RNA sequence: GGGAACGACUCGAGUAGAGUCGAAAAAAGGACGGAUUUGUCAGUGUAGAGCUACAACCUCCUUGCAAAUUCUUGAUUGCGGGACCAAAAGGACCUGAAAUCCGAUAUCUCUAUUUUGUUAAAAAUCGACGUGGAGAGUUCGCUCUCCACAAAAGAAACAACAACAACAAC
Reactivity to DMS in 0.01 (KOAc 150mM, MgCl2 10mM, bicine 150mM(pH8.5), 24C), signal-to-noise 5, nucleotides 027 to 129: a010a010g040g000a000c230g040g000a000u000u000u000g040u030c130a040g030u030g040u070a120g010a050g020c030u040a030c070a100a080c090c000u030c020c010u030u040g030c180a100a090a000u080u000c060u050u020g000a120u040u020g000c050g010g020g060a030c050c060a050a060a120a160g020g020a000c050c000u040g000a040a010a090u020c020c270g020a110u000a050u050c010u010c050u070a050u070u000u000u050g040u070u140a000a060a040a080a050u080c040g000a160c270
Reactivity to 2A3 in 0.01 (KOAc 150mM, MgCl2 10mM, bicine 150mM(pH8.5), 24C), signal-to-noise 3, nucleotides 027 to 129: a000a000g060g000a010c090g000g000a030u000u020u130g060u040c020a000g030u000g020u160a050g010a000g090c030u040a000c010a030a030c010c000u000c000c000u020u050g000c010a000a030a070u110u050c060u040u100g050a060u000u030g030c000g000g000g020a020c010c000a040a130a080a180g040g000a000c020c030u000g030a020a000a010u030c000c010g000a010u050a120u060c000u000c020u020a090u090u130u020u060g100u080u100a080a080a040a050a030u050c030g020a010c070